Chemical mapping of a 177-nucleotide RNA with DMS and 2A3. It was measured as part of the RMDB library OK1LIB. Reactivities are given for positions 27 through 126.
[RMDB]
RNA sequence: GGGAACGACUCGAGUAGAGUCGAAAACGACUACGUGAGGAAGGACAGGUUCAGACUUCGCGAGUCCUUUGUGUUUGUGUCUGUCUCGUUGAAUCUCGGUGCCAAAACAAAGGGUGGUCCGAUGUGGCGAUAAGAAAUGAUUCGUCAUUUUUUAUCGAAAAGAAACAACAACAACAAC
Reactivity to DMS in 0.01 (KOAc 150mM, MgCl2 10mM, bicine 150mM(pH8.5), 24C), signal-to-noise 9, nucleotides 027 to 126: c130g000a090c040u010a060c060g000u000g010a070g010g000a080a130g010g000a040c050a090g000g010u020u010c040a060g010a220c040u000u010c040g010c040g000a100g000u010c020c050u010u000u000g010u010g000u000u010u000g010u010g000u000c030u000g000u000c020u010c050g000u010u010g000a060a100u010c050u000c030g000g000u020g000c030c040a040a060a070a060c160a060a080a100g000g000g020u010g000g020u010c020c030g010a070u020g010u010g000g010
Reactivity to 2A3 in 0.01 (KOAc 150mM, MgCl2 10mM, bicine 150mM(pH8.5), 24C), signal-to-noise 9, nucleotides 027 to 126: c040g060a030c030u140a030c060g070u070g050a050g020g060a050a030g100g020a010c030a060g080g000u120u120c020a030g030a070c040u060u030c090g010c030g070a020g080u070c000c000u030u040u050g040u010g020u000u050u050g070u010g020u010c020u010g030u010c010u010c040g040u010u090g040a080a060u010c020u000c030g000g020u060g010c000c010a040a040a040a060c070a050a150a050g070g010g010u020g000g030u010c000c010g020a050u070g040u040g070g010